RNA sequence: GGGAACGACUCGAGUAGAGUCGAAAAGAGAUGCCUCGUCUUCUCCUUGCACCCCUGGAUCUUCAUGAACUCGUCAAACUCCAGCACCCGCCUCUUGCAGCAUGACCAGCCCUUGCUGCCCUCAUGGAAGAUCGGCUGGCCAGGGUGAUAGACACACCGUUUAUGUGCCAUUCGUGGCACAUAAACGAAAAGAAACAACAACAACAAC
Reactivity to 2A3 in 0.01 (KOAc 150mM, MgCl2 10mM, bicine 150mM(pH8.5), 24C), signal-to-noise 2, nucleotides 027 to 156: g050a000g010a010u140g070c030c070u040c020g040u040c040u030u010c010u040c000c040u020u080g040c040a030c010c010c000c010u030g020g010a010u020c020u020u020c010a060u070g000a060a020c020u020c070g100u050c100a060a030a160c020u030c020c000a040g020c010a060c010c030c020g030c020c010u070c010u020u080g030c020a030g010c000a000u080g170a030c240c000a000g000c030c000c000u050u090g020c010u020g010c000c030c010u080c010a040u050g040g090a020a040g000a050u080c060g010g000c010u000g000g000c000c000a020g020g000g000u010g050a030u070a030g010a000c060a000c000a010c140
An RNA of 207 nucleotides, treated with 2A3 and read out base by base.
Values cover nucleotides 27 to 156.
The 2A3 profile rests on 1,727 reads.
It was measured as part of the RMDB library OK3TST.